An RNA of 170 nucleotides, treated with DMS and 2A3 and read out base by base. 2A3 adducts were read by reverse transcription with SuperScript II with manganese. For DMS, 20,525 sequencing reads were counted.
RNA sequence: GGGAACGACUCGAGUAGAGUCGAAAAGUGAUUAUACGAUUACAGUCUUUGUUACUGUCAACCUUGCAAAAGUUUGCACUUAUGCCAUCUUUGCUUACUCACCACAGCUUACACUUGUGUUUCCGGACAGCAAACGCGUUCGCGCGUUUGAAAAGAAACAACAACAACAAC
Reactivity to DMS in 0.01 (KOAc 150mM, MgCl2 10mM, bicine 150mM(pH8.5), 24C), signal-to-noise 6, nucleotides 027 to 129: g010u010g030a100u100u000a100u080a120c190g020a120u000u040a040c020a050g010u010c050u070u070u030g030u040u020a000c050u040g030u010c090a080a050c080c040u030u020g040c130a000a000a000a000g000u000u000u000g000c080a130c150u030u070a110u000g040c020c080a070u030c030u000u000u000g020c050u000u060a060c000u030c010a050c130c050a000c120a060g020c120u040u030a060c100a070c080u020u030g040u020g030u010u000u000c010c000g000g040a140c050a000g000
Reactivity to 2A3 in 0.01 (KOAc 150mM, MgCl2 10mM, bicine 150mM(pH8.5), 24C), signal-to-noise 7, nucleotides 027 to 129: g020u010g030a090u000u230a110u050a180c110g040a050u030u090a020c000a010g010u010c090u130u230u190g140u180u100a010c010u000g040u020c050a080a080c020c020u040u100g010c020a000a010a040a060g020u010u020u010g040c030a040c070u220u090a120u200g010c000c000a000u000c030u010u010u000g020c000u050u080a050c040u020c020a060c010c000a020c000a020g020c010u050u080a030c040a010c020u050u080g020u010g000u050u030u010c000c000g030g050a030c040a060g060